The data come from the RNA Mapping Database (RMDB), library M2PK90.
This 177-nucleotide RNA was probed chemically with DMS and 2A3.
The reactions ran in a buffer of 150 mM KOAc, 10 mM MgCl2 and 150 mM bicine (pH 8.5), at 24 C.
For DMS the reverse transcriptase was MarathonRT.
2A3 adducts were read by reverse transcription with SuperScript II with manganese.
RNA sequence: GGGAACGACUCGAGUAGAGUCGAAAAAGAAAGUGCAACUUAGGAUUUUAGGCUCCCCGGCGUGUCUCGAACCAUGCCGGGCCAAACCCAUAGGGCUGGCGGUCCCUGUGCGGUCAAAAUUCAAAAAUCUAUCAACCAAGUUCGCUUGGUUGAUAGAAAAAGAAACAACAACAACAAC
Reactivity to DMS in 0.01 (KOAc 150mM, MgCl2 10mM, bicine 150mM(pH8.5), 24C), signal-to-noise 2, nucleotides 027 to 126: a070g020a070a040a070g020u000g000c090a040a070c070u000u000a060g010g000a040u000u000u000u000a110g000g000c030u010c100c020c000c020g000g000c010g010u000g000u010c110u000c270g000a180a170c160c000a010u000g050c000c010g030g010g020c070c030a040a140a020c000c000c000a040u000a010g010g020g010c020u000g000g000c110g030g010u000c000c000c000u000g030u000g010c150g000g000u000c170a010a010a050a020u000u000c000a090a090a100a080a100
Reactivity to 2A3 in 0.01 (KOAc 150mM, MgCl2 10mM, bicine 150mM(pH8.5), 24C), signal-to-noise 1, nucleotides 027 to 126: a000g090a040a050a000g030u040g020c040a030a010c140u060u050a050g020g000a030u030u030u000u110a030g010g000c000u080c000c000c010c040g020g020c010g020u010g020u000c040u050c230g040a000a000c020c000a000u010g000c010c000g000g000g000c000c010a020a010a000c000c010c000a020u000a010g000g000g000c050u050g130g040c060g000g010u060c000c000c000u000g000u010g040c090g000g000u000c000a040a060a020a000u080u020c000a100a010a030a000a070